Chemical mapping of a 177-nucleotide RNA with 2A3 and DMS.
The RNA was probed in 150 mM KOAc, 10 mM MgCl2 and 150 mM bicine (pH 8.5) at 24 C.
Reactivities are rounded to 0.1 and cut off at 0 and 3.

RNA sequence: GGGAACGACUCGAGUAGAGUCGAAAACGGGCAGUGAAAGCCAAGCUGGCCCGCCUGGAUCGCCGGUGCGUGCACCUACGGCGGGAAGCAGCCCACCAGCUCACCACCGAGUUGGCGGGCACCUAUGAUCCUGAUCAGCAUUCGUGCUGAUCAGGAUAAAAGAAACAACAACAACAAC
Reactivity to 2A3 in 0.01 (KOAc 150mM, MgCl2 10mM, bicine 150mM(pH8.5), 24C), signal-to-noise 2, nucleotides 027 to 126: c030g010g020g040c030a060g000u050g300a260a070a000g050c040c010a000a010g010c020u110g150g170c000c010c000g070c010c010u040g040g000a110u150c080g000c050c000g040g120u190g100c150g070u060g000c040a030c030c030u040a100c130g020g000c000g020g020g000a010a010g010c010a000g010c000c000c020a000c000c000a000g000c020u000c030a070c130c010a120c060c110g000a000g020u010u010g000g010c000g010g000g040c010a020c010c000u120a210u240g040
Reactivity to DMS in 0.01 (KOAc 150mM, MgCl2 10mM, bicine 150mM(pH8.5), 24C), signal-to-noise 1, nucleotides 027 to 126: c150g010g000g020c010a030g000u030g010a160a100a140g000c000c080a070a090g000c010u000g000g000c000c000c000g000c010c000u030g010g000a060u000c100g000c040c100g000g000u000g020c100g050u010g030c020a120c040c040u000a110c250g010g010c010g050g000g000a300a020g020c030a060g000c000c000c120a000c050c000a010g020c000u000c010a070c140c130a100c190c170g000a030g050u000u000g000g030c040g000g000g030c000a010c090c060u000a040u010g010